[RMDB]
RNA sequence: GGGAACGACUCGAGUAGAGUCGAAAAAAGUCCCUCUUUCUUCGAAAUACAGAUCAGAAACUGUUCCGAACUGAGAGGAUUUGACAACAUCGGUUUGAAAAUCCAAACUUUAUCGAAGCUUGAGGUGACCAGAACAGCAAUUCGUUGCUGUUCUGGUAAAAGAAACAACAACAACAAC
Reactivity to DMS in 0.01 (KOAc 150mM, MgCl2 10mM, bicine 150mM(pH8.5), 24C), signal-to-noise 2, nucleotides 027 to 126: a080a050g000u020c050c000c010u000c000u000u000u000c020u000u000c000g000a050a070a080u020a150c110a030g000a140u000c050a070g020a080a110a150c220u010g010u000u010c060c020g010a060a070c040u000g000a060g000a300g000g000a030u000u020u010g000a300c300a030a010c020a070u000c180g030g030u000u000u000g000a140a020a020a000u030c020c020a070a230a090c160u000u000u020a070u000c000g020a010a040g000c020u000u000g000a030g000g030u000g010
Reactivity to 2A3 in 0.01 (KOAc 150mM, MgCl2 10mM, bicine 150mM(pH8.5), 24C), signal-to-noise 2, nucleotides 027 to 126: a010a000g080u020c000c000c000u000c000u000u000u000c000u000u000c010g030a040a110a050u170a080c050a030g030a130u070c020a060g090a110a200a060c040u120g120u150u000c060c030g050a070a050c030u030g050a050g020a030g090g070a040u000u000u070g050a030c000a020a010c010a100u230c190g170g000u000u020u010g040a040a040a010a010u000c000c000a090a080a070c140u160u130u070a140u040c010g020a000a000g050c010u020u050g000a020g030g020u060g020